[RMDB]
RNA sequence: GGGAACGACUCGAGUAGAGUCGAAAAGUUGAGCGUAAAGACGUUCCAUAUCCUAAGCAAUCUAUUUUUACUAUUAAUAGUGUGGUCCAAAAGGAUGGUGUUGAAAACACUCCUCCUCACUAUUUUACACGAGAGUGCUUCGGCACUCUCAAAAGAAACAACAACAACAAC
Reactivity to DMS in 0.01 (KOAc 150mM, MgCl2 10mM, bicine 150mM(pH8.5), 24C), signal-to-noise 2, nucleotides 027 to 129: g000u020u010g010a000g010c070g020u030a040a100a140g000a130c020g030u040u010c060c030a100u010a060u050c000c000u070a080a060g050c200a000a000u020c110u040a120u000u000u000u000u000a160c040u050a060u080u020a060a000u010a020g020u000g010u030g030g010u110c130c100a030a020a040a010g020g000a050u060g020g050u020g030u040u030g050a030a020a000a020c030a030c020u010c000c000u030c040c000u020c000a020c020u020a010u000u000u000u000a110c110a040c040
Reactivity to 2A3 in 0.01 (KOAc 150mM, MgCl2 10mM, bicine 150mM(pH8.5), 24C), signal-to-noise 8, nucleotides 027 to 129: g080u080u080g000a000g000c040g030u100a060a120a080g190a070c000g010u010u020c000c000a020u050a060u060c020c000u060a070a020g040c030a050a070u020c050u150a280u070u150u080u080u120a100c050u080a060u290u090a010a010u000a000g000u000g020u050g040g000u060c110c110a080a120a060a020g040g000a020u160g060g120u010g040u040u080g180a100a080a030a000c000a010c000u020c000c000u030c000c000u010c000a000c000u000a000u020u040u020u050a050c070a020c070
Source information:
Conditions: 150 mM KOAc, 10 mM MgCl2 and 150 mM bicine (pH 8.5), 24 C. Structure probing data (DMS and 2A3) for a 170-nucleotide construct. For DMS, 9,323 sequencing reads were counted.